[RMDB]
This 207-nucleotide RNA was probed chemically with DMS and 2A3. For 2A3 the reverse transcriptase was SuperScript II with manganese.
RNA sequence: GGGAACGACUCGAGUAGAGUCGAAAAGCUAGUCGGAGACGACUAGCAACGAUCAGUUCGCUGAUCGGAAGGUGCACUCAAAUACCCUCGAGGCACUAAUAGGCGACGCAGAGGGUAAAACUGAGAAAGCAGAUAACAAAAAUAAAAAGGCGUCGCGACCUUUUAAAUGAUUCGUCAUUUAAAAGGUAAAAGAAACAACAACAACAAC
Reactivity to DMS in 0.01 (KOAc 150mM, MgCl2 10mM, bicine 150mM(pH8.5), 24C), signal-to-noise 2, nucleotides 027 to 156: g020c000u000a030g000u000c010g000g020a290g000a290c020g020a020c000u000a010g000c010a040a020c010g000a000u010c010a010g010u000u010c290g040c000u010g010a010u010c000g000g010a100a140g030g050u010g000c010a160c030u000c010a020a080a210u000a030c000c000c000u010c020g010a140g010g070c020a030c030u000a040a080u010a170g010g010c010g010a040c020g040c020a100g010a030g000g000g000u000a060a000a090a140c130u000g000a230g010a060a110a130g010c010a050g000a210u000a130a300c050a060a040a090a050a150u000a060a050a110a140a160g000g000c010g040u000c000g060c000g000
Reactivity to 2A3 in 0.01 (KOAc 150mM, MgCl2 10mM, bicine 150mM(pH8.5), 24C), signal-to-noise 3, nucleotides 027 to 156: g000c000u000a000g010u000c000g020g000a020g000a080c010g010a000c010u000a000g000c000a000a000c000g000a000u000c000a000g030u080u090c130g040c120u000g000a000u000c010g000g020a080a050g030g000u040g000c040a060c190u010c010a050a100a090u110a080c000c000c000u020c010g030a060g030g000c050a000c040u000a000a060u070a100g100g000c000g000a010c000g010c010a020g000a000g010g000g020u020a020a060a010a010c000u010g010a010g050a120a100a020g090c020a020g050a130u180a140a040c110a050a090a050a030a010u210a080a090a040a020a000g080g000c000g010u000c010g000c030g010